RNA sequence: GGGAACGACUCGAGUAGAGUCGAAAAUUUCUCCUAUUCGUAGGAGAAAGAAGGACCACCCGGGAGGGUUAAGGCCAUACGGACAGCCGCGUCCACUGCCGAUAAGGGCUGAGUUCGCUCAGCCCAAAGAUGCUUAAACUUUCGAGUUUAAGCAUCUAAAAGAAACAACAACAACAAC
Reactivity to DMS in 0.01 (KOAc 150mM, MgCl2 10mM, bicine 150mM(pH8.5), 24C), signal-to-noise 5, nucleotides 027 to 126: u000u000u000c000u000c000c000u000a030u000u010c170g010u000a010g010g000a020g010a000a000a020g010a150a150g000g000a090c030c040a090c030c010c010g020g020g010a140g000g000g000u000u010a050a080g020g010c010c070a100u000a090c100g010g020a050c050a120g020c070c070g020c190g000u010c020c030a140c120u010g000c010c020g000a230u010a090a140g000g000g010c000u000g000a030g020u000u000c220g010c020u000c000a010g010c000c000c000a000a010
Reactivity to 2A3 in 0.01 (KOAc 150mM, MgCl2 10mM, bicine 150mM(pH8.5), 24C), signal-to-noise 2, nucleotides 027 to 126: u010u000u010c000u020c000c000u020a010u060u040c170g090u040a000g000g020a010g010a010a010a000g000a020a080g030g010a050c010c020a010c010c010c010g010g070g030a080g030g010g000u060u170a050a070g030g010c010c010a060u080a110c060g020g040a010c010a040g040c050c030g080c050g030u000c010c010a040c070u050g050c010c010g030a030u070a150a160g010g000g000c000u000g000a000g000u030u090c140g020c060u000c000a000g000c010c000c010a010a010